Notes: This 207-nucleotide RNA was probed chemically with 2A3. The RNA was probed in 150 mM KOAc, 10 mM MgCl2 and 150 mM bicine (pH 8.5) at 24 C. For 2A3, 1,429 sequencing reads were counted.
[RMDB]
RNA sequence: GGGAACGACUCGAGUAGAGUCGAAAAGGGGUCCUCGAUGCCACUUGGAUUUAACUAUCUUUUGACGGUCUGAAGCCUCCACGGACCGAUAAGAUAGUUUGUCAGUGGCUACCGAGGACGGAGGCACCCAAAAGUACCUUGGUUCGCCAAGGUACAACUAGCAACCUAUCUUCGGAUAGGUUGCUAGAAAAGAAACAACAACAACAAC
Reactivity to 2A3 in 0.01 (KOAc 150mM, MgCl2 10mM, bicine 150mM(pH8.5), 24C), signal-to-noise 2, nucleotides 027 to 156: g050g010g020g040u030c000c000u000c010g010a000u010g000c000c000a050c090u100u240g160g020a050u170u260u170a030a010c010u010a030u000c030u040u020u020u160g260a140c030g010g020u000c000u010g070a120a040g060c040c030u050c100c020a050c020g030g000a010c020c010g020a010u010a030a000g000a010u000a030g000u020u030u060g020u000c020a010g000u010g020g000c000u000a000c010c000g030a010g010g000a000c000g000g000a010g000g010c050a160c010c000c000a010a160a000a010g000u010a010c000c000u000u000g000g090u020u060c300g080c070c000a010a000g000g000u010a000c010a000a020